[RMDB]
RNA sequence: GGGAACGACUCGAGUAGAGUCGAAAAGGAAGCAAUCCUUUACGGAGGGUGGAAAGAAAUUCCUCCAGAUGAUUUGGGUUGCUUGCAUCAUUGGUUUUGGGUUACAUCUUUUGGGCACCCCUGGAUGAACUUACAUGGGGUUCGCCCCAUGUAAGUUAAAAGAAACAACAACAACAAC
Reactivity to DMS in 0.01 (KOAc 150mM, MgCl2 10mM, bicine 150mM(pH8.5), 24C), signal-to-noise 3, nucleotides 027 to 126: g020g030a050a010g010c020a030a020u000c000c000u000u000u000a150c070g010g020a210g010g010g010u000g020g000a120a090a150g010a110a110a090u010u010c000c000u000c000c000a080g010a270u000g000a260u010u010u000g010g010g010u000u000g010c010u000u000g000c050a090u000c070a080u000u010g000g000u010u000u000u000g010g010g000u000u000a090c110a070u000c030u000u000u010u000g010g020g000c050a070c040c010c000c030u000g010g000a100u010g010
Reactivity to 2A3 in 0.01 (KOAc 150mM, MgCl2 10mM, bicine 150mM(pH8.5), 24C), signal-to-noise 1, nucleotides 027 to 126: g090g030a000a000g020c000a010a020u020c010c010u000u040u050a140c080g000g030a000g000g000g100u070g000g180a110a120a090g120a090a260a020u130u080c000c000u000c000c000a080g030a180u180g040a020u100u080u130g030g010g000u010u030g000c020u020u040g020c020a060u070c010a000u060u120g030g090u050u050u040u120g080g050g010u050u100a060c010a040u060c110u110u200u120u080g050g010g000c080a100c010c040c000c020u020g060g010a070u080g030